Chemical mapping of a 177-nucleotide RNA with DMS and 2A3. The DMS profile rests on 2,191 reads. It was measured as part of the RMDB library VIROID.

RNA sequence: GGGAACGACUCGAGUAGAGUCGAAAAAGGGGAAAGGGAACUUACCUGUCGUCGUCGACGAAGGCAGCUAAGUUGGUGACGCCGAGUGGAGUAAAGACGGAGAACCUCCGCUAGUCGGAAAGACUCCGAGUAGGAUACAGUUCGCUGUAUCCUACUCAAAAGAAACAACAACAACAAC
Reactivity to DMS in 0.01 (KOAc 150mM, MgCl2 10mM, bicine 150mM(pH8.5), 24C), signal-to-noise 3, nucleotides 027 to 126: a100g000g000g000g000a070a020a080g000g010g020a090a050c030u010u010a040c190c000u000g000u000c000g020u000c030g010u000c240g000a100c050g030a090a030g000g000c080a030g010c090u010a020a100g010u000u000g000g020u000g010a060c080g000c050c070g010a050g020u010g000g010a080g000u010a050a070a050g000a190c120g010g000a010g000a050a130c290c020u000c000c010g010c040u000a060g010u030c030g020g000a040a040a090g000a220c030u000c030c040
Reactivity to 2A3 in 0.01 (KOAc 150mM, MgCl2 10mM, bicine 150mM(pH8.5), 24C), signal-to-noise 2, nucleotides 027 to 126: a000g070g000g010g000a040a170a000g030g020g030a000a020c010u040u020a030c020c010u040g040u030c020g000u000c020g030u040c060g040a200c040g030a020a010g030g000c020a020g020c050u030a000a040g000u020u060g020g080u050g000a010c070g030c050c000g010a010g010u070g060g050a050g030u120a100a150a070g060a040c080g000g010a010g010a050a070c030c020u000c010c000g040c030u060a080g090u280c020g000g030a090a000a040g030a010c000u000c030c040